An RNA of 177 nucleotides, treated with 2A3 and DMS and read out base by base. For DMS, 6,611 sequencing reads were counted. The data come from the RNA Mapping Database (RMDB), library OK1LIB.

[RMDB]
RNA sequence: GGGAACGACUCGAGUAGAGUCGAAAACACUUUUACCCCGUUUGCGUCGCUCCAUCCGGUCUGGAGCAGUCACCUCAAGAACUUCUAACCCGGUGUUCUGAAAAUAACGAAGCAAACCGGAACCAUAGUACGGGAAGAAAUUCGUUUCUUCCCGUACAAAAGAAACAACAACAACAAC
Reactivity to 2A3 in 0.01 (KOAc 150mM, MgCl2 10mM, bicine 150mM(pH8.5), 24C), signal-to-noise 5, nucleotides 027 to 126: c060a050c030u080u100u100u220a140c010c020c010c000g020u030u070u070g050c050g000u030c020g020c010u000c020c010a090u030c040c020g020g050u030c040u030g020g000a010g010c030a000g020u020c020a010c010c010u050c030a090a040g020a090a090c010u100u040c020u110a070a110c000c000c030g000g020u000g030u080u040c030u040g070a020a060a080a030u220a100a040c080g040a030a040g060c040a070a030a030c000c000g040g010a040a060c030c000a070u050a090
Reactivity to DMS in 0.01 (KOAc 150mM, MgCl2 10mM, bicine 150mM(pH8.5), 24C), signal-to-noise 4, nucleotides 027 to 126: c120a110c090u000u010u010u020a060c060c020c010c030g020u020u000u020g000c030g010u010c070g010c010u010c000c020a090u030c020c020g010g050u000c100u000g000g000a050g030c040a060g000u020c090a060c070c010u000c130a050a070g000a050a040c070u020u010c020u020a090a200c140c070c060g000g010u020g000u020u000c010u000g000a090a050a080a120u020a060a090c110g010a110a130g000c050a010a060a030c040c080g000g000a090a060c090c070a070u020a140